About this RNA
Structure probing data (DMS) for a 177-nucleotide construct. Reactivities are given for positions 27 through 126. The RNA was probed in 150 mM KOAc, 10 mM MgCl2 and 150 mM bicine (pH 8.5) at 24 C.
RNA sequence: GGGAACGACUCGAGUAGAGUCGAAAAGGGGUGGUGCUGAUGGCAACGGGGGCCUGGUUUGAUCCCGGUUUUGGGGGCAAACAGCCUUUUGGUAGCGAACAACAUCAAGUUGAGCAAUCCGGUAAUCGCGUUUUAACCUAUUCGUAGGUUAAAACGCAAAAGAAACAACAACAACAAC
Reactivity to DMS in 0.01 (KOAc 150mM, MgCl2 10mM, bicine 150mM(pH8.5), 24C), signal-to-noise 2, nucleotides 027 to 126: g000g010g010g010u010g000g010u000g000c070u000g000a080u000g010g010c050a100a100c110g000g020g000g010g030c070c100u000g010g000u000u000u010g020a050u010c010c010c000g010g010u000u000u010u000g000g020g000g000g030c040a010a010a030c040a160g010c000c030u000u000u000u040g030g010u010a140g020c040g000a040a080c040a020a050c040a050u000c160a050a140g030u000u000g000a110g000c100a070a120u000c020c000g030g010u000a070a070u000c140